An RNA of 177 nucleotides, treated with DMS and 2A3 and read out base by base. Source: RMDB library M2PK90, as collected in RNAgym. High DMS reactivity at an A or C suggests that its Watson-Crick edge is free. The reactions ran in a buffer of 150 mM KOAc, 10 mM MgCl2 and 150 mM bicine (pH 8.5), at 24 C.
RNA sequence: GGGAACGACUCGAGUAGAGUCGAAAAUACAAGUACGAAAGUACAAGCCUUAUCAGUUGCGCCUUCUGGUCAAAUUAGCGCUCACCCAGGAGGUCCUUCGCAUGAGGUCGACAAGCGCUAAAAGAAACGACUAUGAAAUGUUCGCAUUUCAUAGUCGAAAAGAAACAACAACAACAAC
Reactivity to DMS in 0.01 (KOAc 150mM, MgCl2 10mM, bicine 150mM(pH8.5), 24C), signal-to-noise 3, nucleotides 027 to 126: u020a110c200a080a120g010u000a010c010g010a130a070a130g010u000a000c000a090a100g020c000c000u000u020a060u000c230a140g000u010u000g010c030g010c010c000u000u000c000u000g000g010u000c060a040a070a090u020u010a010g010c010g010c000u010c120a110c260c010c010a020g000g000a010g000g000u020c030c000u000u000c040g010c060a040u000g010a000g000g020u010c080g050a080c240a050a060g010c000g000c000u000a010a050a110a150g000a070a080a170
Reactivity to 2A3 in 0.01 (KOAc 150mM, MgCl2 10mM, bicine 150mM(pH8.5), 24C), signal-to-noise 2, nucleotides 027 to 126: u180a010c050a040a160g000u010a030c010g040a100a030a020g000u020a000c040a030a040g000c000c010u070u070a080u160c130a160g150u290u200g130c050g000c020c000u000u000c000u020g000g030u050c020a000a110a300u090u050a050g000c010g000c030u060c060a030c000c020c000a000g010g010a010g010g010u010c000c000u020u030c020g010c000a030u130g020a010g000g030u050c050g040a020c060a120a010g000c000g000c000u020a050a060a010a060g080a000a140a030